[RMDB]
RNA sequence: GGGAACGACUCGAGUAGAGUCGAAAACAGCCUAGGCACCGGUGGCGACCGGGUAUGGUAACAAUCCCCAAGAUUCAGCGAAAGCUGGAAUGGAUAAUCAGCAGCGAAUCCGUAACGGUCACGCCGACCAGUGAGACGUUUUCGAACGUCUCACUGGAAAAGAAACAACAACAACAAC
Reactivity to 2A3 in 0.01 (KOAc 150mM, MgCl2 10mM, bicine 150mM(pH8.5), 24C), signal-to-noise 3, nucleotides 027 to 126: c040a000g110c020c040u100a090g100g060c090a080c100c020g040g000u020g050g010c130g040a030c000c000g010g000g070u020a050u070g030g000u040a070a010c030a040a090u060c010c010c000c000a020a050g080a230u020u030c000a010g000c010g030a090a050a010g000c020u000g000g010a010a040u080g020g010a020u030a150a110u180c020a010g040c010a000g010c010g060a040a030u020c010c010g010u020a010a000c000g010g020u010c000a010c020g030c020c000g010a070
Reactivity to DMS in 0.01 (KOAc 150mM, MgCl2 10mM, bicine 150mM(pH8.5), 24C), signal-to-noise 1, nucleotides 027 to 126: c230a190g000c060c010u000a040g080g020c110a020c130c020g000g000u000g000g070c120g090a050c060c000g000g010g050u000a000u000g040g010u000a030a130c170a120a090u030c080c000c000c050a100a130g010a100u000u000c000a000g010c010g010a200a040a170g010c010u010g000g000a100a080u090g000g030a190u030a060a040u000c080a100g010c080a040g000c000g000a080a020u020c000c040g000u030a000a050c010g000g000u000c020a060c000g000c020c020g000a180